Record summary:
An RNA of 177 nucleotides, treated with DMS and 2A3 and read out base by base. The RNA was probed in 150 mM KOAc, 10 mM MgCl2 and 150 mM bicine (pH 8.5) at 24 C. For 2A3 the reverse transcriptase was SuperScript II with manganese. DMS adducts were read by reverse transcription with MarathonRT.
[RMDB]
RNA sequence: GGGAACGACUCGAGUAGAGUCGAAAAAUAUUCAAGAAGUUUGGUGUCUUUUUUGAGAUGACACACUCCAGGCGUGAAAGACCGCUGAUAAAAGUGUCCGCACCCCCUAACGGGUUACAAGUAGGGGUGUAAAAAGCCUAUUCGUAGGCUUUUUACAAAAAGAAACAACAACAACAAC
Reactivity to DMS in 0.01 (KOAc 150mM, MgCl2 10mM, bicine 150mM(pH8.5), 24C), signal-to-noise 5, nucleotides 027 to 126: a100u040a080u030u020c060a070a080g010a070a110g010u000u010u010g020g030u000g000u010c010u000u020u000u010u030u010g010a070g020a080u020g000a030c030a010c030a070c060u010c120c230a170g000g000c000g010u000g000a110a130a100g010a120c100c000g010c010u000g000a120u020a050a060a130a100g010u010g000u000c010c130g010c040a050c060c000c010c010c020u000a050a080c040g000g000g040u010u030a070c130a060a140g000u010a030g000g000g000g000
Reactivity to 2A3 in 0.01 (KOAc 150mM, MgCl2 10mM, bicine 150mM(pH8.5), 24C), signal-to-noise 2, nucleotides 027 to 126: a000u130a130u060u110c020a040a000g030a110a060g140u090u080u120g050g020u040g040u060c020u000u100u030u040u030u130g120a130g030a260u080g010a010c010a000c000a000c020u000c030c010a070g000g030c000g000u040g070a030a000a000g140a190c210c000g010c000u010g010a000u190a040a080a030a000g040u030g030u080c000c020g050c010a070c000c010c000c000c000u020a070a070c010g070g000g070u080u220a050c040a080a000g000u000a020g010g000g000g010